[RMDB]
RNA sequence: GGGAACGACUCGAGUAGAGUCGAAAAGUAAAUCGUAGACCGUUAUCACUGAAUCGCAUGUUUUACCCCAUUCAAAACAGCAUUACGCAGGGUGCGCAAUGCAAACAGCCAGAUUAACGCGGUCCAGUCCCACAAUACGGUUCGCCGUAUUGUGGGAAAAAGAAACAACAACAACAAC
Reactivity to 2A3 in 0.01 (KOAc 150mM, MgCl2 10mM, bicine 150mM(pH8.5), 24C), signal-to-noise 1, nucleotides 027 to 126: g050u030a000a110a140u220c160g050u050a040g030a000c060c000g060u050u040a130u100c030a010c080u050g080a170a070u010c050g020c070a130u020g090u010u060u050u050a030c000c020c020c000a050u220u200c060a060a060a080a090c040a030g000c020a010u070u100a050c050g040c000a050g190g200g140u040g040c030g000c000a080a030u020g000c000a000a020a130c000a000g040c030c030a050g000a050u050u140a020a070c060g010c000g000g000u010c000c020a050g050
Reactivity to DMS in 0.01 (KOAc 150mM, MgCl2 10mM, bicine 150mM(pH8.5), 24C), signal-to-noise 2, nucleotides 027 to 126: g010u010a040a080a120u000c130g000u000a090g010a060c020c000g000u000u000a110u020c160a080c030u010g000a060a020u010c160g050c090a080u000g000u000u000u010u030a270c060c010c040c020a050u000u020c160a080a070a050a100c220a160g000c020a030u020u000a020c000g010c020a170g010g000g000u000g000c000g020c020a000a030u000g020c010a030a050a070c080a090g020c060c090a070g000a050u000u010a040a070c130g010c010g010g000u000c000c070a090g000
An RNA of 177 nucleotides, treated with 2A3 and DMS and read out base by base. For 2A3, 820 sequencing reads were counted. Conditions: 150 mM KOAc, 10 mM MgCl2 and 150 mM bicine (pH 8.5), 24 C. For 2A3 the reverse transcriptase was SuperScript II with manganese. DMS (dimethyl sulfate) methylates the pairing face of unpaired adenines and cytosines. Values cover nucleotides 27 to 126.